Structure probing data (2A3 and DMS) for a 177-nucleotide construct. The reactions ran in a buffer of 150 mM KOAc, 10 mM MgCl2 and 150 mM bicine (pH 8.5), at 24 C.
RNA sequence: GGGAACGACUCGAGUAGAGUCGAAAAGACACCCUUGGCAGAUGACCUCCUCGUUGGUGGGUGUCGGUAAUGUUGUCAGUCACAGGCAACAGUUAACGAUCUGCGUAAAUAAAAAGAGAAGAACAAAGAUAUGCCACGAUUUCGAUCGUGGCAUAUCAAAAGAAACAACAACAACAAC
Reactivity to 2A3 in 0.01 (KOAc 150mM, MgCl2 10mM, bicine 150mM(pH8.5), 24C), signal-to-noise 2, nucleotides 027 to 126: g000a000c000a000c000c000c000u020u090g060g010c020a030g000a000u000g000a000c020c000u000c000c000u130c080g060u070u000g020g000u000g000g050g000u020g000u010c000g020g030u030a000a000u000g040u000u000g000u000c000a060g060u080c020a060c080a120g000g020c000a000a000c000a000g000u030u070a080a000c110g230a030u010c000u000g000c000g000u050a040a040a100u210a000a020a030a090a050g210a000g160a150a050g040a100a040c060a060a090a020
Reactivity to DMS in 0.01 (KOAc 150mM, MgCl2 10mM, bicine 150mM(pH8.5), 24C), signal-to-noise 2, nucleotides 027 to 126: g050a000c000a000c030c010c000u000u010g000g060c000a000g000a040u000g030a040c010c000u030c080c030u000c120g010u040u010g000g050u000g050g030g000u000g030u010c000g000g060u000a100a070u000g000u010u010g000u000c020a090g000u020c300a120c300a030g000g000c000a000a000c000a050g000u030u000a000a000c000g040a020u000c010u000g060c000g010u060a060a010a070u090a030a110a040a160a110g000a050g000a130a080g000a080a170c300a050a110a070
For 2A3, 1,135 sequencing reads were counted.
2A3 adducts were read by reverse transcription with SuperScript II with manganese.
For DMS, 1,780 sequencing reads were counted.
Source: RMDB library OK1LIB, as collected in RNAgym.